[RMDB]
RNA sequence: GGGAACGACUCGAGUAGAGUCGAAAAAUAAAGCACAUGAAGCACAUGAAGCACGGCAAGCAGUACAAGCACUACAAGCAGUACAAGCACAUGAAGCAGUAGAAGCAGGCGAAGCACAUGAAAAAAACAUGCGUAUAUAGUUCGCUAUAUACGCAUGAAAAGAAACAACAACAACAAC
Reactivity to DMS in 0.01 (KOAc 150mM, MgCl2 10mM, bicine 150mM(pH8.5), 24C), signal-to-noise 5, nucleotides 027 to 126: a070u010a060a060a090g010c030a050c100a040u000g000a080a110g020c050a060c080a060u010g010a080a100g030c040a070c110g010g000c030a060a070g010c030a040g000u000a040c070a060a070g000c030a060c060u010a050c130a050a050g000c030a040g010u000a040c100a050a050g000c030a070c080a030u010g010a060a070g010c020a020g000u000a040g010a070a060g010c040a030g020g010c030g020a030a050g020c050a030c070a060u010g000a010a000a070a060a060a040a150
Reactivity to 2A3 in 0.01 (KOAc 150mM, MgCl2 10mM, bicine 150mM(pH8.5), 24C), signal-to-noise 3, nucleotides 027 to 126: a000u140a010a070a000g050c030a020c010a080u090g090a040a010g000c020a030c000a120u070g050a090a000g020c030a010c050g010g020c020a050a010g010c010a000g020u040a040c020a070a050g020c010a000c030u090a030c030a090a010g060c010a010g030u030a020c020a060a060g000c000a000c010a070u110g050a050a000g000c020a000g020u040a020g030a050a000g010c030a010g060g000c020g050a050a010g030c010a020c020a120u150g120a060a070a010a000a000a030a010
Notes
Structure probing data (DMS and 2A3) for a 177-nucleotide construct. The DMS profile rests on 4,980 reads. For 2A3 the reverse transcriptase was SuperScript II with manganese. The data come from the RNA Mapping Database (RMDB), library M2PK90. Conditions: 150 mM KOAc, 10 mM MgCl2 and 150 mM bicine (pH 8.5), 24 C.